Chemical mapping of a 177-nucleotide RNA with 2A3 and DMS.
Conditions: 150 mM KOAc, 10 mM MgCl2 and 150 mM bicine (pH 8.5), 24 C.
[RMDB]
RNA sequence: GGGAACGACUCGAGUAGAGUCGAAAAGUUUGCGUGGAGUAUCCAGGGUGAUAUUCGACAAAGAUACCUACAGAGCUGCUGUAGCGAUUGGGGCAGCCAUUUACGCUCAAACAUUUUCUGGUGCGUCGGAUAACGGGUUUUUCGAAACCCGUUAUCCAAAAGAAACAACAACAACAAC
Reactivity to 2A3 in 0.01 (KOAc 150mM, MgCl2 10mM, bicine 150mM(pH8.5), 24C), signal-to-noise 2, nucleotides 027 to 126: g000u030u020u040g040c040g040u010g140g030a030g000u040a030u060c030c050a280g240g150g020u300g040a020u000a040u070u000c010g000a000c010a000a050a010g000a000u080a080c000c010u000a010c040a060g080a110g010c040u110g000c020u100g080u300a040g010c070g120a130u010u210g110g000g000g110c000a000g010c020c000a010u110u170u020a040c010g030c000u030c040a090a170a050c050a110u080u130u000u140c100u170g020g040u040g040c050g030u040c040
Reactivity to DMS in 0.01 (KOAc 150mM, MgCl2 10mM, bicine 150mM(pH8.5), 24C), signal-to-noise 2, nucleotides 027 to 126: g000u010u010u010g020c300g000u000g000g020a040g000u010a020u000c010c020a300g010g040g050u020g000a030u000a020u010u000c030g020a040c010a040a300a030g050a020u000a080c030c000u000a040c120a110g020a140g020c100u000g000c070u000g000u020a070g020c100g000a070u000u000g030g000g010g000c090a000g020c010c050a080u000u010u000a070c090g000c000u050c070a070a110a120c140a090u000u010u010u000c050u000g000g010u010g000c080g010u000c300